[RMDB]
RNA sequence: GGGAACGACUCGAGUAGAGUCGAAAAUUCUUCCUUUCUCUCGCCGGGUAGCCGUUGCUGCUUAAGCGAGUUUCUAGUGCCACUUUGUCACUAGUUUGUAUUAUGAGUUUCACACUCACUUCAAUGACGGUGAUAGAUACUACAUAUCACUCCUGCUCUAACCCCUAUUGUUCGCAAUAGGGGUUAGAAAAGAAACAACAACAACAAC
Reactivity to 2A3 in 0.01 (KOAc 150mM, MgCl2 10mM, bicine 150mM(pH8.5), 24C), signal-to-noise 2, nucleotides 027 to 156: u120u040c020u030u030c000c000u100u150u050c080u000c000u000c000g020c000c030g050g030g000u010a000g010c010c050g190u070u290g000c020u000g030c000u040u040a200a000g000c010g000a000g000u000u070u000c000u000a000g010u000g010c040c000a180c150u120u170u200g040u040c000a000c000u000a000g030u040u100u250g070u040a170u140u030a020u090g000a000g000u050u170u170c060a110c000a010c090u020c010a030c050u130u200c140a120a230u120g030a070c150g000g010u000g040a060u000a050g070a040u080a140c040u010a040c070a150u060a000u020c000a030c000u020c020c020u050g010c030u040